[RMDB]
RNA sequence: GGGAACGACUCGAGUAGAGUCGAAAAAAAAAGAUAUGGACUCGAACUACACUAGCAGAGUGGCGAAGAACUAAGAUCGGAAACGAUCUUAGGGAGCCACGAUCUAGUGCGAGUCCUAAGUCAAAAAGUGAAGAUAUGAGUUCGCUCAUAUCUUCACAAAAGAAACAACAACAACAAC
Reactivity to DMS in 0.01 (KOAc 150mM, MgCl2 10mM, bicine 150mM(pH8.5), 24C), signal-to-noise 2, nucleotides 027 to 126: a020a090a080a100a110g010a020u010a300u000g000g010a020c000u010c000g020a070a040c080u000a300c010a000c010u000a000g000c190a010g030a300g000u000g020g020c000g000a090a110g000a100a230c000u000a000a000g000a010u000c000g020g020a080a040a100c000g020a010u010c010u000u010a000g000g020g030a080g020c000c000a000c020g000a070u000c000u000a000g010u000g000c020g000a010g010u000c010c000u000a000a100g000u020c020a080a090a070a110a110
Reactivity to 2A3 in 0.01 (KOAc 150mM, MgCl2 10mM, bicine 150mM(pH8.5), 24C), signal-to-noise 2, nucleotides 027 to 126: a070a040a000a010a060g090a050u150a090u150g000g000a000c000u020c000g000a050a040c110u300a050c260a000c000u020a020g000c180a030g140a010g160u010g020g000c020g280a300a040g000a080a010c010u000a000a010g000a010u010c020g000g010a070a070a030c000g010a010u030c020u010u000a000g000g000g000a000g000c010c000a000c000g000a010u020c000u000a000g000u000g030c000g000a000g000u000c000c000u000a010a000g070u000c020a000a010a030a260a070
This 177-nucleotide RNA was probed chemically with DMS and 2A3. Reactivities are given for positions 27 through 126. For DMS, 2,330 sequencing reads were counted. 2A3 adducts were read by reverse transcription with SuperScript II with manganese.